[RMDB]
RNA sequence: GGGAACGACUCGAGUAGAGUCGAAAAGCUCACUCAUGCUUUGGCUGUCUGUUUGUCUGUUAGUGGUGUAUAGGAAUGCUUGUGAUUUUUGCACAUUGAUUUUGUAUCCUGAGACUUUGCUGAAGUUGCUUAUCAGCUUAAGGAGAUUUUGGGCUGAGUGCUGUCAUUUAUUCGUAAAUGACAGCACAAAAGAAACAACAACAACAAC
Reactivity to DMS in 0.01 (KOAc 150mM, MgCl2 10mM, bicine 150mM(pH8.5), 24C), signal-to-noise 2, nucleotides 027 to 156: g010c030u020c020a080c090u000c050a120u000g000c050u000u000u010g020g020c010u000g040u010c030u010g010u000u010u000g000u000c030u000g020u000u000a080g020u010g000g020u000g030u000a110u000a060g010g020a100a090u000g010c020u000u010g020u010g000a140u000u000u020u010u000g010c020a040c050a090u000u000g010a150u020u000u000u000g010u010a130u000c020c000u000g010a160g020a040c070u000u000u010g010c010u010g020a030a290g020u000u000g010c000u000u000a210u000c020a040g040c010u000u000a050a050g020g020a180g010a210u000u000u000u000g000g010g030c020u010g000a160
Reactivity to 2A3 in 0.01 (KOAc 150mM, MgCl2 10mM, bicine 150mM(pH8.5), 24C), signal-to-noise 2, nucleotides 027 to 156: g030c010u010c060a070c050u050c020a020u100g040c030u010u040u100g040g030c010u030g030u060c010u020g130u090u120u070g050u000c050u060g080u090u060a090g000u040g050g000u040g020u060a090u120a040g040g010a080a030u060g030c000u040u040g010u010g110a160u060u040u110u180u250g040c050a020c010a040u070u110g030a110u060u120u040u080g050u070a070u010c000c000u010g020a030g020a080c000u140u090u070g020c030u000g010a050a020g030u060u050g000c010u080u090a090u130c000a000g060c000u000u060a060a040g080g010a080g010a020u040u050u090u120g000g000g000c020u020g030a000
This 207-nucleotide RNA was probed chemically with DMS and 2A3.
The data come from the RNA Mapping Database (RMDB), library OK3TST.
The reactions ran in a buffer of 150 mM KOAc, 10 mM MgCl2 and 150 mM bicine (pH 8.5), at 24 C.
Values are in units of 0.01, from 0 to 300, in steps of 10.
The DMS profile rests on 6,418 reads.